This 177-nucleotide RNA was probed chemically with DMS.

[RMDB]
RNA sequence: GGGAACGACUCGAGUAGAGUCGAAAACGCCUCGGCCACCGCGAUUGGGCGGCUACGGAACGCAUCAACAAAGAGGAGUUAGCAACGGGAAUGAAGGUAGGUGAUUGCGGUCUUAGACUUGUAUGUAUGGCCCGUAAAAUUUCGAUUUUACGGGCCAAAAAGAAACAACAACAACAAC
Reactivity to DMS in 0.01 (KOAc 150mM, MgCl2 10mM, bicine 150mM(pH8.5), 24C), signal-to-noise 1, nucleotides 027 to 126: c290g020c030c020u000c060g030g010c000c040a070c030c000g020c070g010a130u000u010g000g030g000c080g030g020c110u000a090c100g030g020a080a170c120g030c030a040u030c060a120a050c090a010a160a040g010a090g000g000a060g020u020u010a090g030c090a030a020c140g020g000g000a070a050u000g000a130a060g000g010u000a010g010g020u000g010a040u000u000g000c060g020g020u020c070u000u000a090g000a030c070u000u010g000u000a070u010g040u000a140
The DMS profile rests on 765 reads. Conditions: 150 mM KOAc, 10 mM MgCl2 and 150 mM bicine (pH 8.5), 24 C.